[RMDB]
RNA sequence: GGGAACGACUCGAGUAGAGUCGAAAAAGGGCAGAACGCGCAGUCCGUGCAGACCACGGCAGAGUCGCAUUUGCGUUGCUCGAGGCGCAACCGAUACCGCCAAAGAGCCCGCCGCCCGAAGGCGCCCGAAAUCAAUACUGUUCGCAGUAUUGAUUUCAAAAGAAACAACAACAACAAC
Reactivity to 2A3 in 0.01 (KOAc 150mM, MgCl2 10mM, bicine 150mM(pH8.5), 24C), signal-to-noise 5, nucleotides 027 to 126: a000g030g000g000c050a050g020a170a030c050g010c010g000c030a010g070u070c000c010g000u000g010c070a080g050a260c090c000a000c010g000g000c030a030g030a050g250u270c010g000c020a010u060u070u130g010c020g030u050u180g010c000u010c000g000a040g010g010c010g000c020a030a040c040c000g040a070u130a160c040c020g010c000c000a060a180a010g010a000g000c020c010c000g000c010c020g000c010c000c010g010a020a050g090g010c080g040c000c020c000
Reactivity to DMS in 0.01 (KOAc 150mM, MgCl2 10mM, bicine 150mM(pH8.5), 24C), signal-to-noise 7, nucleotides 027 to 126: a120g000g000g010c010a150g020a040a030c110g010c010g030c030a210g000u010c010c010g020u000g010c140a230g010a190c300c010a010c020g000g010c010a220g020a090g010u010c010g020c020a060u000u000u010g010c010g000u000u010g010c000u000c020g000a300g010g000c000g020c110a120a130c190c110g010a130u010a060c270c000g020c000c020a010a120a130g000a040g000c000c300c010g000c030c270g000c000c010c020g020a080a080g010g000c150g000c010c010c050
An RNA of 177 nucleotides, treated with 2A3 and DMS and read out base by base. For DMS the reverse transcriptase was MarathonRT. The RNA was probed in 150 mM KOAc, 10 mM MgCl2 and 150 mM bicine (pH 8.5) at 24 C.